[RMDB]
RNA sequence: GGGAACGACUCGAGUAGAGUCGAAAAGCAAAUAAGAUUUAGGGGAAGAAGAUGACAACCUUCUCGCGGUCUUCCCUGUUAGGUGUGUAGACACAAUGAAUGUCAUCAAAACUAAAUAUACAAAAAAGUUAUUAAACACGUUCGCGUGUUUAAUAACAAAAGAAACAACAACAACAAC
Reactivity to 2A3 in 0.01 (KOAc 150mM, MgCl2 10mM, bicine 150mM(pH8.5), 24C), signal-to-noise 1, nucleotides 027 to 126: g040c010a040a000a210u250a270a020g100a240u030u060u230a040g030g020g030g000a020a010g020a060a000g030a020u000g000a020c050a010a000c030c030u100u010c040u080c000g070c080g000g020u010c000u000u000c000c040c000u000g100u090u160a120g060g060u010g000u010g120u130a070g070a300c000a000c000a020a030u050g100a020a000u040g010u000c000a000u000c000a020a080a000a080c020u000a030a040a180u210a040u080a230c030a040a160a040a040a000a000
Reactivity to DMS in 0.01 (KOAc 150mM, MgCl2 10mM, bicine 150mM(pH8.5), 24C), signal-to-noise 1, nucleotides 027 to 126: g040c120a050a180a100u010a150a070g000a180u010u010u010a050g000g000g010g040a040a060g020a240a130g000a010u000g000a050c030a040a050c040c000u000u000c000u010c030g030c250g000g000u000c000u020u010c000c020c000u050g000u000u000a070g000g060u010g010u010g000u000a030g010a010c000a020c100a070a050u030g020a020a110u020g000u000c010a020u000c010a070a150a110a130c090u000a030a110a070u010a090u000a130c050a000a040a140a060a060a180